[RMDB]
RNA sequence: GGGAACGACUCGAGUAGAGUCGAAAAGCUCGGAGACGAGCAAGGCUGACAAAACGGUGUCCCAACCUCCACGUGGUGUCGGCUGGAUAAUGCUGCAUUAUGUUGCAUUUAUCAACUGGGAACGAAACAUAUCCAGCCGAUUCGUCGGCUGGAUAUGAAAAGAAACAACAACAACAAC
Reactivity to 2A3 in 0.01 (KOAc 150mM, MgCl2 10mM, bicine 150mM(pH8.5), 24C), signal-to-noise 5, nucleotides 027 to 126: g000c000u000c000g050g020a120g030a050c000g000a000g010c000a000a050g050g000c010u030g000a010c030a030a080a080a040c080g080g000u040g030u010c010c010c010a020a050c000c020u060c010c030a150c100g070u120g030g040u020g000u010c000g000g020c020u020g010g000a010u010a020a020u010g010c030u010g020c000a030u100u130a110u300g030u010u010g000c010a000u040u050u080a050u020c040a070a050c090u060g000g020g030a030a030c030g050a080a040a000
Reactivity to DMS in 0.01 (KOAc 150mM, MgCl2 10mM, bicine 150mM(pH8.5), 24C), signal-to-noise 3, nucleotides 027 to 126: g000c000u000c000g000g000a290g000a180c000g030a000g020c020a100a040g020g000c010u020g000a060c000a020a100a120a050c060g000g010u040g010u010c030c000c000a160a090c090c030u010c230c080a090c060g020u000g010g030u000g000u000c010g020g000c000u000g010g000a020u010a020a010u010g000c040u000g000c010a290u040u010a140u010g000u010u000g010c000a000u000u010u010a020u010c010a070a090c140u020g000g000g020a050a060c100g020a120a110a170